[RMDB]
RNA sequence: GGGAACGACUCGAGUAGAGUCGAAAAGAUAUGGACGCAAGCUCGAUAAGAUCCCAUCGGAAACGAUGGAAGAUCUUUUGACGAGCGCAAGUCCUAAGUCAAACUUCGGACGUUCGCGUCCGAAGAACCUUUUUACAGUGUUCGCACUGUAAAAAGGAAAAGAAACAACAACAACAAC
Reactivity to DMS in 0.01 (KOAc 150mM, MgCl2 10mM, bicine 150mM(pH8.5), 24C), signal-to-noise 7, nucleotides 027 to 126: g010a030u000a220u010g000g000a010c000g020c250a120a280g010c010u000c000g020a140u000a010a010g010a010u000c000c020c010a000u000c000g000g000a060a050a080c000g020a010u000g010g000a080a090g010a010u000c000u000u000u010u010g020a190c090g010a010g000c000g000c160a070a230g000u000c000c000u000a030a100g000u000c030a100a100a220c000u000u000c000g000g010a010c010g010u000u010c240g020c010g010u010c000c000g000a010a010g010a060a110
Reactivity to 2A3 in 0.01 (KOAc 150mM, MgCl2 10mM, bicine 150mM(pH8.5), 24C), signal-to-noise 5, nucleotides 027 to 126: g010a020u050a010u110g010g000a000c020g040c170a090a090g010c010u010c020g100a120u070a300a000g000a000u000c020c000c000a000u000c000g000g020a050a000a020c020g000a010u000g020g030a180a130g010a020u000c000u070u110u140u250g240a100c020g000a000g000c010g000c010a000a050g010u000c000c000u000a040a010g030u000c060a140a060a080c010u000u000c000g010g000a000c010g030u050u080c300g030c010g110u000c000c010g000a000a000g000a000a000
The record gives the reactivity of an RNA of 177 nucleotides to DMS and 2A3.